[RMDB]
RNA sequence: GGGAACGACUCGAGUAGAGUCGAAAACUACAGCCCGGCCUCAGCGAGGUCCCCUCGGUAGGUGCCUUCCGCGUCACGGAGCGCCGUGACCGGGGGUAACCCUGGCCGGGCACAGGCCCGUCUGGGUCCUUUAAGUAAUAUUCGUAUUACUUAAAGGAAAAGAAACAACAACAACAAC
Reactivity to 2A3 in 0.01 (KOAc 150mM, MgCl2 10mM, bicine 150mM(pH8.5), 24C), signal-to-noise 9, nucleotides 027 to 126: c040u100a060c060a030g010c000c000c000g000g000c000c020u130c070a060g070c040g110a090g020g030u070c020c010c000c010u030c010g000g040u050a040g010g000u010g010c010c040u260u170c020c010g050c100g150u100c050a040c090g020g010a080g070c100g070c030c010g030u050g120a010c000c000g000g000g000g000g000u000a020a020c010c000c000u010g000g000c000c000g000g000g000c000a000c000a000g000g000c000c000c010g060u110c160u240g060g010g050u030
Reactivity to DMS in 0.01 (KOAc 150mM, MgCl2 10mM, bicine 150mM(pH8.5), 24C), signal-to-noise 5, nucleotides 027 to 126: c110u020a110c170a180g020c010c010c010g010g010c020c020u020c150a070g030c120g000a080g020g010u000c240c030c010c000u000c010g020g000u010a090g010g000u000g000c050c060u030u030c000c010g000c200g010u030c200a080c010g010g000a230g010c150g000c000c000g010u010g010a020c000c000g020g000g000g000g020u000a020a030c030c000c050u000g000g020c000c010g010g000g030c030a010c070a030g010g000c000c010c010g010u020c130u020g000g010g000u000
This 177-nucleotide RNA was probed chemically with 2A3 and DMS. DMS adducts were read by reverse transcription with MarathonRT. The reactions ran in a buffer of 150 mM KOAc, 10 mM MgCl2 and 150 mM bicine (pH 8.5), at 24 C.